[RMDB]
RNA sequence: GGGAACGACUCGAGUAGAGUCGAAAAGCAAUAUGCCCAUAAGCUGUGCCUAAUUCGUAGCUUUCUACACCCCAGUUAUACGUUAAUUCAAUUACCGCACUUUCACUUUCAUCGGCAUAACCUAAAAAUUAGUGUUAGGGUUCGCCCUAACACUAAUAAAAGAAACAACAACAACAAC
Reactivity to DMS in 0.01 (KOAc 150mM, MgCl2 10mM, bicine 150mM(pH8.5), 24C), signal-to-noise 3, nucleotides 027 to 126: g020c090a130a110u000a080u020g010c020c000c030a150u010a080a080g010c040u000g030u000g010c040c040u010a040a120u010u000c120g020u010a070g000c140u000u000u010c070u000a080c120a150c040c010c020c060a080g020u010u000a080u000a090c080g000u000u000a050a120u020u010c060a080a050u000u000a060c110c050g000c050a050c070u000u010u010c040a080c040u000u000u000c050a060u010c080g010g000c030a050u000a060a120c050c040u000a030a050a060a090
Notes: The data come from the RNA Mapping Database (RMDB), library OK2TST. This 177-nucleotide RNA was probed chemically with DMS. For DMS, 2,027 sequencing reads were counted. The RNA was probed in 150 mM KOAc, 10 mM MgCl2 and 150 mM bicine (pH 8.5) at 24 C.